[RMDB]
RNA sequence: GGGAACGACUCGAGUAGAGUCGAAAACGUUGAGUUGAAGCACGAACACCGCACCUUGGCUGGGAAUCACCACCGUCUUCUGCGCGACGGUCCGCAACUUGCCGUUCUUGCUGUAUGAACCACCGAGACUCUGUUACUGAUUCGUCAGUAACAGAGUAAAAGAAACAACAACAACAAC
Reactivity to 2A3 in 0.01 (KOAc 150mM, MgCl2 10mM, bicine 150mM(pH8.5), 24C), signal-to-noise 9, nucleotides 027 to 126: c050g020u030u050g060a050g020u030u040g060a080a030g030c050a010c090g050a090a010c050a020c050c020g030c010a070c010c020u090u110g070g000c040u050g010g020g080a050a080u120c040a040c060c000a020c000c010g030u010c000u120u000c040u090g040c070g010c020g050a030c010g010g020u020c020c020g040c020a040a070c040u040u070g010c000c020g030u030u020c020u040u060g020c010u020g020u090a090u140g060a030a030c020c010a040c020c030g040a050g020
Reactivity to DMS in 0.01 (KOAc 150mM, MgCl2 10mM, bicine 150mM(pH8.5), 24C), signal-to-noise 7, nucleotides 027 to 126: c080g010u010u000g000a160g000u000u000g010a090a090g010c030a050c040g010a080a060c070a090c070c050g000c050a050c050c030u010u010g010g020c030u010g000g000g000a100a090u020c070a070c040c040a080c030c010g000u010c020u000u010c040u000g000c060g010c100g010a030c060g000g000u010c040c050g010c080a050a060c070u010u010g010c030c030g000u000u010c030u000u010g010c020u000g010u020a060u010g010a070a080c050c020a070c040c050g000a150g010
This 177-nucleotide RNA was probed chemically with 2A3 and DMS. The reactions ran in a buffer of 150 mM KOAc, 10 mM MgCl2 and 150 mM bicine (pH 8.5), at 24 C. It was measured as part of the RMDB library OK1LIB. For 2A3, 10,918 sequencing reads were counted. For DMS, 22,388 sequencing reads were counted.